Chemical mapping of a 207-nucleotide RNA with 2A3 and DMS. Conditions: 150 mM KOAc, 10 mM MgCl2 and 150 mM bicine (pH 8.5), 24 C. The data come from the RNA Mapping Database (RMDB), library OK3TST. For DMS the reverse transcriptase was MarathonRT.

RNA sequence: GGGAACGACUCGAGUAGAGUCGAAAAAAUCAUGCGCCUUAUCACCAACCUGAUCCGCACUGGUGUAGUCACCGAAGUGGACCGGGAAAACUGGCUUUGCCGGGUGAAAACGGGCGAGCUUGAAACCAACUGGAUCAGCUGGCUGACGCUGCGUGCCACUGCACGCAGCUUUCGAGCUGCGUGCAGUAAAAGAAACAACAACAACAAC
Reactivity to 2A3 in 0.01 (KOAc 150mM, MgCl2 10mM, bicine 150mM(pH8.5), 24C), signal-to-noise 2, nucleotides 027 to 156: a010a010u110c040a030u050g010c020g040c010c000u070u070a040u050c000a010c000c020a030a070c020c000u000g000a050u000c010c000g020c020a030c140u060g040g020u040g010u100a140g130u210c020a000c010c000g040a130a010g000u010g010g010a010c030c020g000g010g040a030a030a020a040c050u060g000g000c000u070u070u120g000c000c010g050g030g000u040g030a050a070a020a020c020g000g020g000c020g000a010g050c050u000u040g030a050a000a000c010c010a010a090c070u040g000g040a050u030c000a020g070c010u050g040g000c040u050g020a020c020g020c030u090g000c030g050u070g030c010c150
Reactivity to DMS in 0.01 (KOAc 150mM, MgCl2 10mM, bicine 150mM(pH8.5), 24C), signal-to-noise 2, nucleotides 027 to 156: a060a050u000c020a050u000g020c000g020c010c020u010u000a180u010c050a040c010c030a050a250c030c000u000g010a000u030c000c000g010c000a300c080u000g040g040u000g010u000a190g010u010c010a030c000c000g030a070a130g050u000g010g010a040c020c000g020g030g020a070a040a050a080c040u000g020g030c030u000u010u000g010c000c000g000g020g020u000g000a040a020a100a130c120g000g000g020c020g010a030g010c080u000u000g010a100a100a060c010c030a040a040c030u000g000g010a130u000c030a040g020c000u000g000g030c020u010g000a100c110g030c010u010g000c000g030u000g040c040c060